[RMDB]
Annotation
An RNA of 177 nucleotides, treated with DMS and 2A3 and read out base by base. For DMS, 11,051 sequencing reads were counted. The data come from the RNA Mapping Database (RMDB), library OK1LIB.

RNA sequence: GGGAACGACUCGAGUAGAGUCGAAAAUUUGGAGUAGGUUAUUCCCACUCUUGCAGGAAACGCUGACCGUACUGGUCGGCUACCAGCAGAGCGGCGUAAACCUGAUCUGGCGUCGCGCCGCCAGGCAGCAUCGGUAAUGAUUCGUCAUUACCGAUGCAAAAGAAACAACAACAACAAC
Reactivity to DMS in 0.01 (KOAc 150mM, MgCl2 10mM, bicine 150mM(pH8.5), 24C), signal-to-noise 5, nucleotides 027 to 126: u020u030u030g010g020a180g020u020a010g000g000u000u020a220u030u010c120c010c010a110c000u000c000u010u070g050c000a060g040g010a110a110a140c260g010c000u000g000a000c000c000g030u030a140c190u070g010g010u000c000g010g010c020u000a020c010c000a030g020c000a000g000a020g020c300g020g000c240g020u010a050a040a030c000c000u010g000a070u010c010u000g000g020c000g010u010c110g010c130g020c100c000g000c000c000a000g010g010c140a150
Reactivity to 2A3 in 0.01 (KOAc 150mM, MgCl2 10mM, bicine 150mM(pH8.5), 24C), signal-to-noise 9, nucleotides 027 to 126: u200u100u130g140g050a100g060u150a040g060g040u060u060a110u220u120c010c000c000a020c000u010c030u060u200g000c020a030g000g030a220a070a030c140g010c000u000g000a010c000c000g100u230a190c150u300g010g000u000c000g000g000c000u000a010c000c000a000g010c000a000g000a010g010c020g030g000c050g040u070a040a040a030c000c000u020g040a130u040c020u020g000g000c010g030u090c060g030c080g050c080c000g000c010c000a010g020g000c020a020
For DMS the reverse transcriptase was MarathonRT.